[RMDB]
An RNA of 170 nucleotides, treated with 2A3 and DMS and read out base by base. The RNA was probed in 150 mM KOAc, 10 mM MgCl2 and 150 mM bicine (pH 8.5) at 24 C. Source: RMDB library 15KLIB, as collected in RNAgym.
RNA sequence: GGGAACGACUCGAGUAGAGUCGAAAACUAAGGAAAUAGUAAGCACUGUGAGCGCUCUUGUCUACAAUAAUAAAUUGUUAGCCAAGAAGGAGCUUUCAGGCCAGUGCUUUAAAAUACUCUAUAAGGGAUGCACACCCGUUCGCGGGUGUGAAAAGAAACAACAACAACAAC
Reactivity to 2A3 in 0.01 (KOAc 150mM, MgCl2 10mM, bicine 150mM(pH8.5), 24C), signal-to-noise 3, nucleotides 027 to 129: c030u030a030a050g190g090a180a060a090u090a060g100u070a010a010g000c000a000c060u000g030u020g100a020g000c030g000c000u020c000u000u000g000u000c010u010a000c020a000a000u150a100a010u120a070a180a020u040u020g040u110u080a000g000c000c000a000a030g040a080a050g060g030a010g010c000u050u060u130c010a000g010g090c010c020a000g020u000g010c000u000u000u000a000a000a010a040u140a020c020u030c010u020a020u060a150a050g040g000g050a000u070g000
Reactivity to DMS in 0.01 (KOAc 150mM, MgCl2 10mM, bicine 150mM(pH8.5), 24C), signal-to-noise 2, nucleotides 027 to 129: c040u030a090a060g060g040a070a130a090u030a110g000u050a090a030g020c000a050c000u070g020u040g000a050g020c020g010c020u030c000u030u000g000u050c010u020a030c020a040a020u030a170a090u000a000a200a080u010u040g010u030u050a050g000c030c020a000a000g040a050a080g000g000a200g030c000u000u000u000c000a110g000g070c300c020a000g040u050g000c040u010u000u000a000a030a120a030u040a100c050u030c060u030a040u050a000a000g000g030g010a120u020g000